Overview:
Structure probing data (2A3) for a 207-nucleotide construct. For 2A3, 556 sequencing reads were counted. 2A3 adducts were read by reverse transcription with SuperScript II with manganese. The RNA was probed in 150 mM KOAc, 10 mM MgCl2 and 150 mM bicine (pH 8.5) at 24 C. It was measured as part of the RMDB library VIROID.
[RMDB]
RNA sequence: GGGAACGACUCGAGUAGAGUCGAAAACAUUCCGACGAUGUUUCCCAGCCAGGGGUUUUCAUCCUCAAGUUUCUUGAUCUUCUUGUUGAUUCGCCGGAGCUCCUUCUCGGCUAUUCGCUUUUUCUUCCUUUCCUCUACCCACUGCUCGAGGGCCUCCACAUCCCUUAAUGUUCGCAUUAAGGGAUGUAAAAGAAACAACAACAACAAC
Reactivity to 2A3 in 0.01 (KOAc 150mM, MgCl2 10mM, bicine 150mM(pH8.5), 24C), signal-to-noise 1, nucleotides 027 to 156: c030a060u100u100c080c060g020a030c060g030a030u020g020u000u080u020c000c000c000a020g080c080c100a020g000g040g020g040u060u030u160u170c030a030u120c000c000u010c060a140a070g050u000u100u080c020u050u090g110a170u030c040u200u000c040u140u100g060u060u060g060a040u180u030c030g010c060c010g140g030a080g000c050u010c040c010u120u070c030u030c080g000g020c030u000a040u010u070c030g070c000u090u060u080u060u010c050u060u100c000c040u070u060u050c010c030u040c010u030a080c000c000c020a040c030u010g020c010u000c040g020a010g010g030g020c010c000u040c030c020